[RMDB]
RNA sequence: GGGAACGACUCGAGUAGAGUCGAAAAGAAAGUGUGUAUUGACAGGUGGUGGAACAAAUAUGAGUUUGUAUAGUAGUCGAACAAAAUGAAACUCAUAUUAGUUCUACCUCCUGUUGAAGCCCACAAAGAAUAAACGGCCAUUCGUGGCCGUUUAUUCAAAAGAAACAACAACAACAAC
Reactivity to 2A3 in 0.01 (KOAc 150mM, MgCl2 10mM, bicine 150mM(pH8.5), 24C), signal-to-noise 3, nucleotides 027 to 126: g110a020a080a060g010u010g010u000g000u010a130u100u170g000a000c000a010g000g000u000g000g000u000g000g000a000a000c010a010a030a000u000a000u000g000a000g020u000u010u060g180u090a090u040a110g250u030a060g120u160c110g120a210a060c080a060a190a010a040u180g020a020a020a000c000u000c010a000u000a010u000u010a030g000u010u000c000u000a000c000c000u000c010c000u000g000u000u000g000a000a000g010c010c050c000a010c000a000a070a010
Reactivity to DMS in 0.01 (KOAc 150mM, MgCl2 10mM, bicine 150mM(pH8.5), 24C), signal-to-noise 2, nucleotides 027 to 126: g000a110a090a150g010u000g020u000g030u030a240u000u060g010a010c000a000g020g010u020g000g020u000g010g000a000a000c000a020a050a000u000a000u010g000a000g000u000u000u000g050u000a010u000a120g000u020a140g000u000c300g000a080a260c040a000a120a040a120u030g000a000a000a000c000u000c020a000u000a040u000u000a000g080u000u000c000u000a000c000c000u000c000c040u000g030u000u020g000a030a300g000c000c000c000a050c040a150a010a060
An RNA of 177 nucleotides, treated with 2A3 and DMS and read out base by base. Source: RMDB library RFM100, as collected in RNAgym. The DMS profile rests on 1,562 reads.